Structure probing data (DMS and 2A3) for a 177-nucleotide construct. For 2A3, 1,401 sequencing reads were counted. In probing experiments dimethyl sulfate is read out at A N1 and C N3, which are open when not base-paired. The reactions ran in a buffer of 150 mM KOAc, 10 mM MgCl2 and 150 mM bicine (pH 8.5), at 24 C.
RNA sequence: GGGAACGACUCGAGUAGAGUCGAAAAGCGUAAGACGUAAUGCGAAAUCAAGCAGUUAGCGGGCUGUGGAUUGCAGCUUGGCCGGCAAAUGGAAUCAGAUCUGGCGACAUUAUUCAGAAGCUGUUCCCUUCCAAAUCUGCUUCGGCAGAUUUGGAAGAAAAGAAACAACAACAACAAC
Reactivity to DMS in 0.01 (KOAc 150mM, MgCl2 10mM, bicine 150mM(pH8.5), 24C), signal-to-noise 1, nucleotides 027 to 126: g030c050g000u030a170a010g000a220c240g000u070a110a000u000g000c000g010a030a060a050u020c090a220a190g010c000a050g030u000u000a020g000c040g000g000g010c030u030g000u000g000g000a130u030u020g040c110a090g040c030u030u010g000g000c030c010g000g030c110a060a100a180u000g010g030a020a060u010c120a010g000a050u020c030u000g000g000c020g010a090c040a030u000u020a010u000u010c020a010g010a120a150g040c000u000g000u000u000c010c010
Reactivity to 2A3 in 0.01 (KOAc 150mM, MgCl2 10mM, bicine 150mM(pH8.5), 24C), signal-to-noise 3, nucleotides 027 to 126: g100c050g020u030a010a010g030a040c060g040u010a070a000u050g040c000g050a060a000a140u070c050a030a000g020c020a030g050u080u090a010g040c030g000g020g000c010u050g000u030g210g210a170u100u300g030c010a030g000c020u030u060g100g000c020c000g000g000c030a140a000a100u110g070g010a050a040u130c040a010g010a130u040c050u050g040g080c050g020a050c010a030u010u110a020u060u050c020a020g010a070a020g010c010u060g010u000u010c000c000